[RMDB]
RNA sequence: GGGAACGACUCGAGUAGAGUCGAAAAUCCCUCCCCUGGCGUUUCUUCCUCGAUUCGGCCCGGCUCAUCUCGACAAGAGGCGGCGAUCCUCAGUGCUCUUACUCUUUUCUGUAAAGAGGAGACUGCUGGAUCCGCCGCCCAAGUUCGAGAUGGGCCAGACCAUUUAUUUGUUCGCAAAUAAAUGGUCAAAAGAAACAACAACAACAAC
Reactivity to 2A3 in 0.01 (KOAc 150mM, MgCl2 10mM, bicine 150mM(pH8.5), 24C), signal-to-noise 2, nucleotides 027 to 156: u010c000c000c000u030c000c010c010c010u010g040g010c030g000u040u080u030c010u210u100c030c050u050c030g030a020u010u030c000g140g000c000c000c010g000g010c000u010c020a000u000c010u000c000g010a000c010a090a090g090a150g100g020c000g000g000c000g000a010u030c000c000u020c000a050g030u150g230c070u000c040u140u280a280c010u040c010u120u130u140u090c150u230g290u300a020a030a000g010a010g010g010a000g000a000c000u010g050c040u010g010g000a000u000c000c150g000c000c000g000c000c000c000a000a000g000u050u010c000g000a000g000a000u010g000g000g000c000c000a000